This 177-nucleotide RNA was probed chemically with DMS and 2A3.
For DMS, 2,465 sequencing reads were counted.
The 2A3 profile rests on 6,103 reads.
For 2A3 the reverse transcriptase was SuperScript II with manganese.
The RNA was probed in 150 mM KOAc, 10 mM MgCl2 and 150 mM bicine (pH 8.5) at 24 C.
RNA sequence: GGGAACGACUCGAGUAGAGUCGAAAAGAUAUGGAGAAUUUGGCGCUACCGGGAGUCGGAAACGACGAAGAACGGUAGAACUACGCUUAAUUCUCCUAAGUCAAACUUAGGUCUUCGGACCUAAGAAGGAUUAAACUUUGUUCGCAAAGUUUAAUCCAAAAGAAACAACAACAACAAC
Reactivity to DMS in 0.01 (KOAc 150mM, MgCl2 10mM, bicine 150mM(pH8.5), 24C), signal-to-noise 3, nucleotides 027 to 126: g000a030u020a300u000g000g010a020g000a010a010u000u000u010g010g060c020g000c000u000a000c000c000g000g000g020a090g020u000c000g010g000a050a090a250c000g000a010c010g030a090a080g010a110a180c010g000g010u000a020g000a070a020c120u020a300c040g000c010u000u010a020a010u000u000c010u010c000c000u000a020a030g000u000c020a150a150a220c000u000u000a010g000g010u010c000u000u010c190g030g000a010c000c000u000a000a000g000a130a160
Reactivity to 2A3 in 0.01 (KOAc 150mM, MgCl2 10mM, bicine 150mM(pH8.5), 24C), signal-to-noise 2, nucleotides 027 to 126: g020a010u080a040u150g020g000a000g010a010a020u020u000u040g020g000c030g000c020u010a000c020c000g000g000g020a030g000u000c010g010g020a080a080a030c020g020a000c020g100a280a030g030a050a010c000g010g000u000a000g000a010a000c050u180a040c030g000c000u000u000a010a000u000u020c000u000c000c000u000a040a000g000u000c030a040a020a070c000u000u000a000g010g010u020c000u020u070c300g150g000a000c000c000u010a000a000g000a010a060